[RMDB]
RNA sequence: GGGAACGACUCGAGUAGAGUCGAAAAACGCAUCAACAGAAAUCUCCAAGACCCGACAGUUUCAAGAUCUCACCUCUUCACGAAGAUCCGCAAGAUUCAAGAGUUAUGAUCGAUUUGUUCUAGACUUUACGACUAAUAUUUUCGAAUAUUAGUCGUAAAAAGAAACAACAACAACAAC
Reactivity to 2A3 in 0.01 (KOAc 150mM, MgCl2 10mM, bicine 150mM(pH8.5), 24C), signal-to-noise 7, nucleotides 027 to 126: a000c050g030c060a070u060c020a040a100c010a050g070a070a140a040u050c040u000c030c010a060a080g060a110c000c010c020g050a050c040a060g020u030u060u090c050a070a050g020a070u020c020u000c010a030c010c000u020c020u050u030c030a030c090g050a060a020g020a060u010c020c020g030c050a040a050g010a060u090u060c020a050a010g010a010g090u100u080a120u130g050a080u040c020g030a060u040u000u090g040u040u000c020u060a030g020a080c020u010u000
Reactivity to DMS in 0.01 (KOAc 150mM, MgCl2 10mM, bicine 150mM(pH8.5), 24C), signal-to-noise 6, nucleotides 027 to 126: a100c070g010c060a030u010c070a080a070c090a100g000a070a110a100u010c020u010c030c030a080a080g000a100c020c020c020g000a060c100a070g010u010u010u010c060a100a120g000a040u010c020u010c080a090c140c000u010c030u000u000c070a070c090g010a080a080g000a040u010c040c040g010c140a070a130g010a060u010u000c060a030a080g010a090g010u000u020a060u010g000a070u000c030g010a120u010u000u010g000u000u000c040u010a140g010a100c130u010u000